Conditions: 150 mM KOAc, 10 mM MgCl2 and 150 mM bicine (pH 8.5), 24 C. Structure probing data (DMS and 2A3) for a 177-nucleotide construct. For 2A3 the reverse transcriptase was SuperScript II with manganese. DMS adducts were read by reverse transcription with MarathonRT.

[RMDB]
RNA sequence: GGGAACGACUCGAGUAGAGUCGAAAAGAUAUGGACGAGCCUACGAUAAGUCAGAGGUCGGAAACGACCUGUGACUUUUGACGUUUGCUCGUCCUAAGUCAAACGGAAGGGGUUCGCCCCUUCCGAAGAUUUUGAGUGUGUUCGCACACUCAAAAUCAAAAGAAACAACAACAACAAC
Reactivity to DMS in 0.01 (KOAc 150mM, MgCl2 10mM, bicine 150mM(pH8.5), 24C), signal-to-noise 1, nucleotides 027 to 126: g010a020u000a160u000g000g000a010c000g010a010g000c000c010u010a000c020g040a190u000a010a010g000u010c030a020g000a010g000g010u000c010g000g000a030a040a080c000g030a010c000c000u000g010u000g010a020c000u000u000u000u000g020a170c110g030u010u000u000g000c010u000c000g000u010c000c000u000a000a040g000u000c030a070a160a220c020g000g000a000a000g020g000g010g010u000u000c260g010c000c000c010c000u000u000c000c000g010a020a030
Reactivity to 2A3 in 0.01 (KOAc 150mM, MgCl2 10mM, bicine 150mM(pH8.5), 24C), signal-to-noise 1, nucleotides 027 to 126: g020a010u060a000u090g020g020a000c010g020a010g000c000c030u030a020c020g150a230u070a300a000g030u010c000a010g010a010g300g000u020c050g030g000a060a030a010c000g000a000c000c040u040g100u010g030a000c010u100u000u020u200g110a010c010g000u000u020u020g020c000u000c000g030u040c000c000u000a000a000g010u000c020a000a080a030c010g000g000a010a010g000g030g020g030u100u200c270g210c000c000c020c000u000u020c010c000g020a010a000